[RMDB]
RNA sequence: GGGAACGACUCGAGUAGAGUCGAAAAGACCUUGGUGUGCGGUUCUCCGAAACGGGAGGUCACGUUCCAAUCGAUGAGGCGUACAUCGUCCCCGGGCACGUACGUCCGCACCUCCUGGAAAUCCAUCUCCUCAAAUAGUCUUCGGACUAUUUGAGGAAAAAGAAACAACAACAACAAC
Reactivity to 2A3 in 0.01 (KOAc 150mM, MgCl2 10mM, bicine 150mM(pH8.5), 24C), signal-to-noise 3, nucleotides 027 to 126: g040a000c010c000u040u050g090g000u070g040u050g140c020g040g090u090u050c050u030c040c000g090a150a120a020c040g000g010g000a020g000g020u070c070a040c080g020u160u120c030c050a050a090u110c090g110a100u090g010a040g030g020c020g020u000a010c030a070u130c140g050u070c000c010c020c090g000g020g000c040a010c080g000u050a010c020g000u020c000c020g010c000a020c030c020u010c010c010u020g030g070a040a110a020u030c020c010a080u050c010
Reactivity to DMS in 0.01 (KOAc 150mM, MgCl2 10mM, bicine 150mM(pH8.5), 24C), signal-to-noise 3, nucleotides 027 to 126: g010a180c030c020u000u010g040g020u010g010u010g050c090g000g000u010u000c020u010c000c050g030a060a080a090c100g000g000g000a060g010g000u000c090a170c070g000u000u000c020c040a080a170u000c090g010a050u010g000a090g020g000c000g020u000a040c030a170u010c110g000u010c010c010c070c090g010g010g000c100a070c140g010u000a070c070g000u010c010c020g010c120a050c000c020u000c020c010u000g010g000a060a080a070u000c050c030a050u010c120
This 177-nucleotide RNA was probed chemically with 2A3 and DMS.
The DMS profile rests on 2,579 reads.
Conditions: 150 mM KOAc, 10 mM MgCl2 and 150 mM bicine (pH 8.5), 24 C.
The data come from the RNA Mapping Database (RMDB), library OK2TST.
DMS adducts were read by reverse transcription with MarathonRT.